[RMDB]
RNA sequence: GGGAACGACUCGAGUAGAGUCGAAAACAAAACUGACCACCUAUGAGGUCAUACAUCGUCAUAGCAAAACAAAACAAAACUGACCAGGUAUGAGGUCAUACAUCGUCAUAACAAACAAAACAACAAACGUAGGACUACCAUUCGUGGUAGUCCUACGAAAAGAAACAACAACAACAAC
Reactivity to 2A3 in 0.01 (KOAc 150mM, MgCl2 10mM, bicine 150mM(pH8.5), 24C), signal-to-noise 4, nucleotides 027 to 126: c040a000a050a000a070c100u030g020a010c000c010a010c000c020u030a070u110g050a040g050g050u000c010a000u120a060c040a110u050c050g070u010c020a030u070a040g100c130a050a030a040a070c080a050a070a010a010c080a050a100a010a080c040u010g000a000c000c000a020g020g030u040a020u050g030a020g070g120u050c000a000u050a010c020a020u070c030g060u040c020a030u090a140a030c030a060a060a030c060a050a110a030a020c100a010a040c000a020a090a000
Reactivity to DMS in 0.01 (KOAc 150mM, MgCl2 10mM, bicine 150mM(pH8.5), 24C), signal-to-noise 2, nucleotides 027 to 126: c030a110a040a000a090c100u000g000a000c030c090a010c120c090u000a000u090g050a110g000g000u000c000a000u000a260c050a010u010c300g000u000c090a000u010a030g030c180a060a130a150a140c260a000a100a010a150c240a160a070a060a170c190u000g000a000c000c080a130g000g000u000a030u000g050a080g030g000u060c000a000u000a000c070a100u050c300g000u000c060a040u000a100a000c230a250a100a130c150a000a090a050a000c120a040a010c270a000a000a080